[RMDB]
This 177-nucleotide RNA was probed chemically with 2A3 and DMS. For DMS, 6,794 sequencing reads were counted. 2A3 adducts were read by reverse transcription with SuperScript II with manganese.

RNA sequence: GGGAACGACUCGAGUAGAGUCGAAAAGACGAACGAAAACACAAAUGUUCCACGGUGCAGAAGGGUCCCUCACAUGAGGAUCACGCAUGUAACUCGGACAGGAUAUGCUUUUGGGAAAAAGAGAGAAUCAAGCUAAAAAAUUCGUUUUUUAGCUUGAAAAAGAAACAACAACAACAAC
Reactivity to 2A3 in 0.01 (KOAc 150mM, MgCl2 10mM, bicine 150mM(pH8.5), 24C), signal-to-noise 4, nucleotides 027 to 126: g070a020c060g030a090a010c020g020a020a030a060a030c070a010c010a020a090a100u090g020u120u040c020c000a030c060g020g020u020g010c010a010g020a100a040g050g000g010u050c060c010c000u040c010a170c040a150u200g020a050g040g010a010u030c030a010c110g020c030a020u020g020u050a060a050c020u020c050g020g000a000c010a020g050g020a060u050a020u150g010c010u010u050u080u070g060g020g010a030a090a010a060a020g110a000g010a010g040a020a030
Reactivity to DMS in 0.01 (KOAc 150mM, MgCl2 10mM, bicine 150mM(pH8.5), 24C), signal-to-noise 7, nucleotides 027 to 126: g020a110c080g010a110a120c060g010a040a040a050a030c060a050c080a050a180a110u000g000u000u000c010c030a090c160g010g020u000g020c020a050g000a120a190g010g000g010u000c030c030c030u000c110a110c170a090u000g010a060g010g000a040u000c040a060c040g000c110a080u000g000u000a040a060c040u000c150g010g000a020c040a040g010g000a120u000a040u000g000c030u000u000u000u000g010g000g000a040a050a040a050a090g000a120g010a090g000a080a120